Source: RMDB library OK2TRN, as collected in RNAgym. Structure probing data (DMS and 2A3) for a 177-nucleotide construct.
[RMDB]
RNA sequence: GGGAACGACUCGAGUAGAGUCGAAAACUGGCAGUUCGAUCAACUUAUUAUUACUGACAUUAAGUUCUUCCAGUGAAGGGGGUAAAUCGCAUAAGGAUCUUAUUUCAUUGCUGGAUGCAUUGAGAUAGAAUGGACUAUGAUUCGUCAUAGUCCAUUCAAAAGAAACAACAACAACAAC
Reactivity to DMS in 0.01 (KOAc 150mM, MgCl2 10mM, bicine 150mM(pH8.5), 24C), signal-to-noise 6, nucleotides 027 to 126: c040u010g000g010c080a040g010u000u000c060g010a080u010c090a040a060c070u000u010a030u010u010a090u010u000a140c140u010g010a110c130a070u000u000a050a070g010u000u000c030u000u000c020c020a040g010u000g010a060a090g010g020g000g000g010u000a020a040a050u000c060g010c110a090u000a100a180g000g010a050u010c110u000u000a010u000u010u000c010a020u000u010g010c000u000g010g000a080u010g010c060a050u000u000g010a050g000a060u000a080
Reactivity to 2A3 in 0.01 (KOAc 150mM, MgCl2 10mM, bicine 150mM(pH8.5), 24C), signal-to-noise 5, nucleotides 027 to 126: c010u010g030g020c010a030g020u070u070c030g040a110u080c060a040a040c040u090u080a050u170u060a080u100u160a210c070u090g090a030c020a110u110u100a080a000g020u030u050c010u020u000c010c010a010g010u030g120a070a090g070g000g010g000g000u020a000a050a040u050c050g000c120a100u040a180a040g090g000a020u000c050u040u020a020u010u010u010c020a030u000u060g000c020u050g060g040a050u060g000c030a040u030u100g020a050g000a040u040a080